Source: RMDB library OK2TRN, as collected in RNAgym.
The record gives the reactivity of an RNA of 177 nucleotides to 2A3 and DMS.
As a SHAPE reagent, 2A3 marks flexible, mostly unpaired nucleotides at the ribose 2'-OH.
Values cover nucleotides 27 to 126.
For 2A3, 1,109 sequencing reads were counted.
RNA sequence: GGGAACGACUCGAGUAGAGUCGAAAAGGUCGAACAUAAAUCAGCUUGGUUCGAUGACAGGCUUGCAAACAAUGGUAACGAAUGUGAUGCGACGCACUCGCUGCGGAAUGCUACGCGCGCUAUCAAACCUAGCGUGCUGAUUCGUCAGCACGCUAGGAAAAGAAACAACAACAACAAC
Reactivity to 2A3 in 0.01 (KOAc 150mM, MgCl2 10mM, bicine 150mM(pH8.5), 24C), signal-to-noise 1, nucleotides 027 to 126: g060g000u030c000g000a030a010c000a020u250a280a140a120u150c060a000g050c020u050u100g000g000u070u030c020g030a010u020g000a000c000a000g000g070c020u040u160g000c140a040a020a040c000a100a180u070g070g000u040a060a010c040g030a090a070u160g030u000g040a070u090g020c000g050a060c000g000c000a000c010u060c070g040c130u020g030c010g010g130a180a040u140g030c010u060a050c030g000c000g010c000g000c060u030a030u100c010a030a010a030
Reactivity to DMS in 0.01 (KOAc 150mM, MgCl2 10mM, bicine 150mM(pH8.5), 24C), signal-to-noise 2, nucleotides 027 to 126: g000g010u000c010g020a020a030c000a060u000a090a060a120u000c300a060g020c130u000u010g020g010u000u000c040g000a010u000g000a080c060a090g020g000c070u000u010g000c070a090a060a110c220a040a090u000g030g000u000a030a070c010g010a080a080u010g000u000g010a080u000g000c060g000a090c070g000c060a060c040u010c100g020c050u000g000c050g020g000a030a070u010g020c010u010a150c000g000c280g000c020g000c070u000a030u000c050a050a080a160
The RNA was probed in 150 mM KOAc, 10 mM MgCl2 and 150 mM bicine (pH 8.5) at 24 C.